[RMDB]
RNA sequence: GGGAACGACUCGAGUAGAGUCGAAAAAAUUAAAUGUUUUACAUUCACAAGUGAUGGGGAGUCUUAUCAUUAAGGUGUGUGUAAUUUAGAGUUCAGUUGGUUUUAUUCUAACUGGACUGCACUUGUUUUCAUAGUGGUGAAAUGCUAUGCGCAUUUACGUGGCGUAAUGAUUCGUCAUUACGCCACGAAAAGAAACAACAACAACAAC
Reactivity to 2A3 in 0.01 (KOAc 150mM, MgCl2 10mM, bicine 150mM(pH8.5), 24C), signal-to-noise 1, nucleotides 027 to 156: a000a000u270u140a080a020a000u090g040u000u070u000u000a000c010a010u120u000c010a000c000a070a090g010u000g020a050u000g000g000g000g060a230g150u040c000u000u030a030u030c000a050u050u020a170a000g010g010u010g000u000g030u000g010u010a020a040u060u050u110a170g030a000g020u000u000c000a000g000u000u060g030g030u050u160u210u300a060u180u020c000u010a000a000c000u000g010g000a010c000u030g000c010a040c030u060u120g060u000u020u070u000c020a050u070a050g010u010g090g020u160g050a040a010a010u030g020c010u050a020u150g070c000g000c040a010u030u090u080a050